The data come from the RNA Mapping Database (RMDB), library OK2TRN.
Chemical mapping of a 177-nucleotide RNA with 2A3 and DMS.
For DMS, 1,842 sequencing reads were counted.

[RMDB]
RNA sequence: GGGAACGACUCGAGUAGAGUCGAAAAGCUGCUAUGAACCCUCGUAACACCGUUUUUGACGCCAAGCGUCUUAUUGGUCGUCGUUACGAAGACCCUGAGACUCAAAAGGAUAUUAAGCACUGGCCCAGAGUAUUUAUCGGUUCGCCGAUAAAUACUCAAAAGAAACAACAACAACAAC
Reactivity to 2A3 in 0.01 (KOAc 150mM, MgCl2 10mM, bicine 150mM(pH8.5), 24C), signal-to-noise 3, nucleotides 027 to 126: g010c050u040g000c020u020a050u270g110a080a080c020c010c000u000c010g000u000a040a010c010a030c010c030g050u030u000u010u080u160g020a010c010g010c070c120a260a090g010c010g050u000c000u010u050a130u050u130g090g000u060c050g070u030c020g000u040u000a020c020g030a060a020g020a030c010c000c000u030g050a040g070a150c040u030c180a060a080a030a000g050g010a010u050a030u200u140a050a010g000c010a020c020u020g050g000c000c000c000a000
Reactivity to DMS in 0.01 (KOAc 150mM, MgCl2 10mM, bicine 150mM(pH8.5), 24C), signal-to-noise 2, nucleotides 027 to 126: g000c150u010g010c050u000a080u000g000a100a090c130c050c050u010c010g030u000a030a070c030a090c090c050g000u000u000u000u000u000g030a000c020g000c020c140a100a110g030c080g000u000c030u000u020a030u010u000g000g000u010c150g000u010c070g010u000u000a040c020g000a050a080g000a130c060c020c080u000g010a090g000a070c090u010c130a020a050a140a070g000g010a090u000a090u000u000a070a080g010c050a020c060u000g010g000c020c020c030a120

Values cover nucleotides 27 to 126.